[RMDB]
RNA sequence: GGGAACGACUCGAGUAGAGUCGAAAACAUCGACCUGGUCACUGGCGAGCGUACCUUGCUGAAAGAACAGCCCGUACUGGGCGGCUACCGCCGCGAAGACUAUGUGGAGCGGCGUGACUGGGCGUACCGUGAGUAGCAAAUUCGUUUGCUACUCACGAAAAGAAACAACAACAACAAC
Reactivity to 2A3 in 0.01 (KOAc 150mM, MgCl2 10mM, bicine 150mM(pH8.5), 24C), signal-to-noise 4, nucleotides 027 to 126: c020a040u100c020g130a300c020c010u000g030g000u000c000a010c030u050g050g000c020g010a000g000c100g040u100a160c020c000u020u060g010c000u020g080a120a170a140g060a150a070c010a040g020c000c000c010g050u110a230c180u220g000g020g010c000g010g000c010u100a120c030c080g010c010c000g010c010g030a050a020g090a080c090u150a160u300g110u130g090g050a070g010c000g030g010c020g000u010g000a010c000u010g000g000g020c010g010u020a040c060
Reactivity to DMS in 0.01 (KOAc 150mM, MgCl2 10mM, bicine 150mM(pH8.5), 24C), signal-to-noise 5, nucleotides 027 to 126: c110a070u010c020g010a160c020c000u000g040g010u000c010a020c030u010g020g010c020g000a090g010c220g000u000a120c110c010u010u000g010c030u010g000a110a070a080g010a090a130c050a110g000c010c020c020g010u030a090c210u010g000g000g020c000g010g010c040u000a080c170c090g000c010c020g010c000g000a100a130g000a090c100u000a050u000g010u000g010g000a300g010c000g010g000c050g000u000g010a020c010u000g000g000g020c020g010u010a070c190